[RMDB]
RNA sequence: GGGAACGACUCGAGUAGAGUCGAAAAAGGUAGCCCGACACGAUUUGGUAACAUGGCGGCGCCAUUAAAGUAUUUCUUAGACACCACCAGCGCCUUAUGGCAAUCUGGCUCAUUAAUCGGCAAACCACCCUGCUACUAAUUUCGAUUAGUAGCAGGGAAAAGAAACAACAACAACAAC
Reactivity to DMS in 0.01 (KOAc 150mM, MgCl2 10mM, bicine 150mM(pH8.5), 24C), signal-to-noise 2, nucleotides 027 to 126: a130g010g040u010a110g000c060c030c050g000a070c070a040c110g000a100u000u010u000g030g000u000a050a140c090a060u000g010g000c020g040g020c070g040c050c050a080u000u020a050a050a120g000u000a150u000u020u000c050u000u010a050g010a170c040a060c070c020a080c000c040a020g040c260g040c000c060u000u000a050u020g000g040c030a050a050u020c060u000g000g010c070u020c050a050u000u000a060a050u000c070g020g000c070a140a080a150c060c050a160
Reactivity to 2A3 in 0.01 (KOAc 150mM, MgCl2 10mM, bicine 150mM(pH8.5), 24C), signal-to-noise 1, nucleotides 027 to 126: a000g050g020u050a060g080c020c020c020g050a020c030a010c070g110a100u000u060u300g020g000u080a160a020c020a060u010g060g000c140g070g030c060g000c000c010a030u010u110a130a060a040g030u060a180u030u120u010c020u000u070a060g020a060c020a010c030c040a020c010c040a030g020c020g000c020c000u170u160a170u120g000g020c000a000a000u110c050u050g030g030c020u010c030a000u030u050a080a070u020c010g000g040c030a040a040a070c000c000a020